This 177-nucleotide RNA was probed chemically with 2A3 and DMS. As a SHAPE reagent, 2A3 marks flexible, mostly unpaired nucleotides at the ribose 2'-OH. It was measured as part of the RMDB library 15KREP. In probing experiments dimethyl sulfate is read out at A N1 and C N3, which are open when not base-paired.
[RMDB]
RNA sequence: GGGAACGACUCGAGUAGAGUCGAAAACUCCUCCGCCUUUUUCCUUGCUGUGAUCCAUUUCUCGAGGGUCUCCUCCCUUGUUCCCCUUCGUCCUCUCCUCGUCUCGGAUUGGCUCAUUCUCAGGUCGCAUGUAAGAGAACUUCGGUUCUCUUACAUGAAAAGAAACAACAACAACAAC
Reactivity to 2A3 in 0.01 (KOAc 150mM, MgCl2 10mM, bicine 150mM(pH8.5), 24C), signal-to-noise 3, nucleotides 027 to 126: c020u010c010c000u020c010c020g040c020c000u070u060u010u070u020c010c000u040u060g020c030u040g020u060g080a080u030c020c010a060u030u090u030c080u050c040g050a080g010g050g040u020c020u020c020c000u040c000c000c000u000u040g020u040u020c010c000c000c020u020u050c020g010u010c000c000u000c010u000c000c010u000c010g060u000c010u000c030g030g020a060u020u030g020g010c000u000c010a140u100u010c020u000c010a030g000g040u020c010g000
Reactivity to DMS in 0.01 (KOAc 150mM, MgCl2 10mM, bicine 150mM(pH8.5), 24C), signal-to-noise 6, nucleotides 027 to 126: c080u000c010c010u000c030c030g010c030c020u020u000u010u000u000c030c020u000u010g010c060u000g010u010g010a080u000c040c030a100u000u000u000c040u010c050g010a120g010g010g010u000c050u000c050c030u000c020c020c020u010u010g010u000u000c010c010c010c130u000u000c070g010u000c040c020u000c030u000c030c020u000c040g010u000c030u000c060g010g010a200u000u000g000g000c030u000c020a120u000u000c020u000c020a100g000g010u000c080g010